RNA sequence: GGGAACGACUCGAGUAGAGUCGAAAACGCGGCGCGCUACUGGAGCGGAUGCCGACAAGCUUGAGCGCCCGGUUCGAUCGGGCAUGUGCGCAGUCGUCGUUACCGGAGGCGGUCGUGGCCGCGCUAAAGUAAAUCACACGUUCGCGUGUGAUUUACUAAAAGAAACAACAACAACAAC
Reactivity to 2A3 in 0.01 (KOAc 150mM, MgCl2 10mM, bicine 150mM(pH8.5), 24C), signal-to-noise 6, nucleotides 027 to 126: c020g000c000g000g000c060g000c000g020c080u130a060c030u060g030g020a060g040c010g050g040a070u120g090c070c000g010a020c010a060a050g030c020u140u250g080a060g110c050g000c010c010c000g000g050u140u260c150g070a200u080c000g010g010g000c010a040u140g070u050g000c040g030c100a040g030u010c010g000u000c020g020u030u080a210c000c010g020g020a070g040g090c040g000g020u080c020g030u040g070g020c000c000g000c010g000c040u100a150a090
Reactivity to DMS in 0.01 (KOAc 150mM, MgCl2 10mM, bicine 150mM(pH8.5), 24C), signal-to-noise 3, nucleotides 027 to 126: c020g040c000g010g020c000g020c000g040c080u000a080c060u000g000g000a130g000c020g020g000a050u010g030c090c020g000a030c020a110a250g000c030u030u020g000a140g010c120g000c000c000c030g000g020u030u040c250g000a140u010c020g010g000g030c030a000u010g000u000g000c090g000c200a290g000u000c030g020u020c020g000u010u020a090c030c000g000g030a300g000g010c010g000g000u010c050g010u000g010g020c020c000g000c010g000c180u010a110a090
This 177-nucleotide RNA was probed chemically with 2A3 and DMS. Values cover nucleotides 27 to 126.